This 207-nucleotide RNA was probed chemically with 2A3.

RNA sequence: GGGAACGACUCGAGUAGAGUCGAAAAGACGGCAGUUCGGAACUAUAAUGACAACGAACACAUCCCAAGUUGUCAUUAUAACUGGACUGAGUACAGUUAGUUGUAUAGCAUACUCUUGGGAUGUGUUGUAUGCUAUAUAGUUCUAACUGUACUGUCACAGUUCGUACAUCUUCGGAUGUACGAACUGAAAAGAAACAACAACAACAAC
Reactivity to 2A3 in 0.01 (KOAc 150mM, MgCl2 10mM, bicine 150mM(pH8.5), 24C), signal-to-noise 3, nucleotides 027 to 156: g020a000c030g000g060c010a000g010u030u050c090g010g030a080a040c030u010a000u020a020a100u060g050a040c000a030a010c080g130a140a000c060a000c010a050u000c030c000c010a050a020g030u040u010g040u030c020a010u030u000a000u000a010a010c010u040g040g010a000c020u050g010a030g110u120a080c010a000g010u000u010a010g010u040u210g030u020a030u010a040g030c050a040u040a070c020u060c020u090u060g000g000g000a000u000g010u000g010u010u060g000u010a050u000g030c010u000a000u000a000u010a050g070u080u050c010u020a000a010c000u010g010u020a130c020u050g000u020c000a000
Conditions: 150 mM KOAc, 10 mM MgCl2 and 150 mM bicine (pH 8.5), 24 C. Reactivities are given for positions 27 through 156. For 2A3 the reverse transcriptase was SuperScript II with manganese. It was measured as part of the RMDB library OK3TST.